[RMDB]
RNA sequence: GGGAACGACUCGAGUAGAGUCGAAAACGAUCGUACUACGUGAUGGUACGAUCAUGUAGGAUCGUACCUAGUCGCACGUACAUAGCGCUGGCCUGCGCAUGCUGUCUAGGAUCCGGCCGCGCAUGCGUGCGUGAAGGAUCUUCGGAUCCUUCACGCAAAAAGAAACAACAACAACAAC
Reactivity to DMS in 0.01 (KOAc 150mM, MgCl2 10mM, bicine 150mM(pH8.5), 24C), signal-to-noise 5, nucleotides 027 to 126: c060g010a080u010c120g000u010a210c040u000a040c050g010u010g020a120u000g000g000u000a030c040g000a000u000c000a050u000g030u000a120g000g000a020u000c010g010u000a070c010c010u000a180g010u010c060g010c010a030c100g010u000a040c110a060u000a130g010c020g010c020u020g030g000c000c020u000g040c120g030c130a020u000g010c030u000g010u000c150u010a110g010g000a060u000c070c060g000g010c010c060g010c040g000c010a030u000g000c040g020
Reactivity to 2A3 in 0.01 (KOAc 150mM, MgCl2 10mM, bicine 150mM(pH8.5), 24C), signal-to-noise 2, nucleotides 027 to 126: c020g020a050u140c100g030u120a030c020u030a050c070g050u040g040a070u120g010g050u060a000c020g000a000u000c000a000u090g130u080a080g300g010a010u000c030g000u020a040c000c020u020a040g080u050c050g030c030a020c030g000u060a030c030a110u140a050g030c020g020c110u140g040g020c010c030u080g040c030g010c030a010u090g100c030u120g070u260c110u220a090g060g010a050u020c040c030g030g020c020c000g020c000g000c010a010u060g030c020g030
Description:
Chemical mapping of a 177-nucleotide RNA with DMS and 2A3. High DMS reactivity at an A or C suggests that its Watson-Crick edge is free. It was measured as part of the RMDB library OK2TRN. The RNA was probed in 150 mM KOAc, 10 mM MgCl2 and 150 mM bicine (pH 8.5) at 24 C.